This 207-nucleotide RNA was probed chemically with DMS and 2A3.
[RMDB]
RNA sequence: GGGAACGACUCGAGUAGAGUCGAAAACAAGCGCGAGGAUGUAUUCGAACACGGAUAUUCAACCGCCGACAGUGGUACCGGUUUUGGGCUUGCCAUUGUCCGCGAAAUCGCCGAAGCCCACGAAUGGUCCCUCAACGUAACCGAAAGCGACGGCGGCUCAAUACUUGGAGUUCGCUCCAAGUAUUGAAAAAGAAACAACAACAACAAC
Reactivity to DMS in 0.01 (KOAc 150mM, MgCl2 10mM, bicine 150mM(pH8.5), 24C), signal-to-noise 2, nucleotides 027 to 156: c050a070a170g020c060g050c020g000a030g000g030a140u020g030u010a070u000u000c030g020a090a140c140a110c070g020g020a020u000a090u000u000c060a090a140c050c000g070c040c060g000a010c000a010g030u000g000g020u010a030c010c050g020g010u000u000u010u030g050g020g000c060u020u010g000c010c000a040u000u000g000u010c010c060g000c030g000a040a110a080u000c020g010c020c020g000a120a270g000c020c000c010a150c080g010a060a100u000g040g010u000c020c000c030u010c150a110a090c080g030u010a070a050c050c030g010a040a080a130g010c000g000a150c010g030g010c000g020g000c110
Reactivity to 2A3 in 0.01 (KOAc 150mM, MgCl2 10mM, bicine 150mM(pH8.5), 24C), signal-to-noise 3, nucleotides 027 to 156: c020a040a030g020c020g010c010g080a040g030g010a030u070g040u060a030u050u050c060g060a150a020c170a040c120g030g000a030u030a090u190u160c080a130a130c050c030g000c010c000g010a000c000a020g010u010g000g010u020a020c020c020g050g070u030u110u170u180g060g010g020c090u070u110g000c010c000a020u000u020g010u000c000c010g000c000g050a070a050a070u140c020g020c010c000g010a020a010g000c000c040c020a030c030g030a050a060u090g030g030u010c040c010c010u070c060a090a110c070g040u070a070a060c010c040g040a150a070a000g030c030g040a010c000g010g010c000g000g010c010
The reactions ran in a buffer of 150 mM KOAc, 10 mM MgCl2 and 150 mM bicine (pH 8.5), at 24 C. It was measured as part of the RMDB library OK3TST.